[RMDB]
RNA sequence: GGGAACGACUCGAGUAGAGUCGAAAAGAUAUGGAAUUGAACGACAUGGAGUGCACUCGGAAACGAGUGUGCUCCAACAGCGUUUCAAUUCCUAAGUCAAAGAUGAUUAUCUUCGGAUAAUCAUCAAUCCAACAAUUAGGUUCGCCUAAUUGUUGGAAAAAGAAACAACAACAACAAC
Reactivity to DMS in 0.01 (KOAc 150mM, MgCl2 10mM, bicine 150mM(pH8.5), 24C), signal-to-noise 5, nucleotides 027 to 126: g000a010u000a100u010g000g000a030a010u000u000g010a010a010c000g020a040c080a300u020g010g020a020g020u000g000c000a010c000u000c000g030g000a040a020a070c000g010a020g030u010g010u000g010c000u000c000c000a010a010c200a210g010c010g000u000u020u000c000a000a000u000u000c000c000u000a010a060g000u000c010a120a110a170g000a020u000g000a020u000u000a000u000c000u000u000c280g010g000a010u000a000a010u000c000a000u000c000a090a120
Reactivity to 2A3 in 0.01 (KOAc 150mM, MgCl2 10mM, bicine 150mM(pH8.5), 24C), signal-to-noise 4, nucleotides 027 to 126: g000a010u040a000u070g000g000a000a000u000u010g000a010a010c010g110a010c300a300u300g000g010a010g010u020g000c010a000c000u000c000g000g010a010a030a000c000g000a000g010u010g000u000g000c010u030c000c000a010a010c000a000g000c000g000u020u060u210c010a000a000u000u000c000c000u000a020a000g020u000c020a090a050a200g010a010u020g000a010u010u000a000u010c020u060u060c290g130g000a010u010a000a000u010c000a000u000c000a000a030
Chemical mapping of a 177-nucleotide RNA with DMS and 2A3. Source: RMDB library TTRDES, as collected in RNAgym. For DMS, 8,450 sequencing reads were counted. The reactions ran in a buffer of 150 mM KOAc, 10 mM MgCl2 and 150 mM bicine (pH 8.5), at 24 C.